RNA sequence: GGGAACGACUCGAGUAGAGUCGAAAAGAUAUGGAGGUCUUACAGUUCGGAUAUGUCUCGAGGAUCUAGCGGUCGGAAACGACCGCCUAGGGAGAGAUUUGAUCCGAACUGUAAGACCUCCUAAGUCCAUAAAACUUAGGUUCGCCUAAGUUUUAUGAAAAGAAACAACAACAACAAC
Reactivity to DMS in 0.01 (KOAc 150mM, MgCl2 10mM, bicine 150mM(pH8.5), 24C), signal-to-noise 2, nucleotides 027 to 126: g010a110u010a300u010g000g010a010g030g010u000c010u010u000a000c000a010g000u000u000c000g030g010a020u010a050u000g000u000c000u000c010g000a110g020g010a030u000c000u000a020g010c010g010g000u000c000g010g000a140a140a300c020g010a000c000c010g010c300c020u000a000g000g000g010a030g010a010g000a020u000u000u000g000a010u000c000c010g000a010a000c000u000g010u000a000a010g000a000c000c010u000c010c000u000a000a120g010u000c040